[RMDB]
RNA sequence: GGGAACGACUCGAGUAGAGUCGAAAAGAAAGCCAUCACACCCUCCUGUAGGUUUGGUUGGACUUGAAGUUGUACUCGACAGCCCGAACGUUCAUGUCGUACGGACUGUGACAGCUCAGCUCGAACUUGGACGUGGCCAUAUCGACCCGUGCCGGCAUCUAGGCAAGGAGUUCGCUCCUUGCCUAGAAAAAGAAACAACAACAACAAC
Reactivity to DMS in 0.01 (KOAc 150mM, MgCl2 10mM, bicine 150mM(pH8.5), 24C), signal-to-noise 2, nucleotides 027 to 156: g040a110a090a070g030c010c010a080u000c080a080c070a170c100c010c020u000c040c050u010g020u030a060g010g010u000u000u010g020g040u020u020g030g000a090c020u000u000g000a080a120g040u000u000g060u000a070c050u010c030g020a080c010a010g000c000c020c000g040a100a040c030g030u000u010c260a130u010g050u000c020g050u000a140c010g060g020a000c020u000g000u010g020a080c090a100g040c050u000c030a050g030c020u000c020g020a090a100c070u000u000g030g000a050c040g000u000g010g000c060c020a130u000a070u000c030g000a070c000c000c020g010u010g010c030c010g000g030c070a160
Reactivity to 2A3 in 0.01 (KOAc 150mM, MgCl2 10mM, bicine 150mM(pH8.5), 24C), signal-to-noise 2, nucleotides 027 to 156: g040a000a000a000g020c000c000a030u060c020a030c020a050c040c010c060u070c060c000u230g150u300a060g030g000u040u050u010g040g010u060u060g020g010a090c040u040u080g050a050a020g010u050u060g080u070a000c030u020c090g150a000c010a000g080c000c000c000g030a030a010c020g000u240u250c140a120u140g080u170c000g000u000a050c060g030g000a000c000u000g000u020g040a020c030a010g000c020u020c020a020g010c000u050c080g030a050a020c060u040u090g040g010a000c020g070u160g010g000c010c000a030u020a050u230c120g030a100c000c000c020g020u050g110c000c000g000g090c020a030
The data come from the RNA Mapping Database (RMDB), library OK3TST.
This 207-nucleotide RNA was probed chemically with DMS and 2A3.
The reactions ran in a buffer of 150 mM KOAc, 10 mM MgCl2 and 150 mM bicine (pH 8.5), at 24 C.
Reactivities are given for positions 27 through 156.
For 2A3, 715 sequencing reads were counted.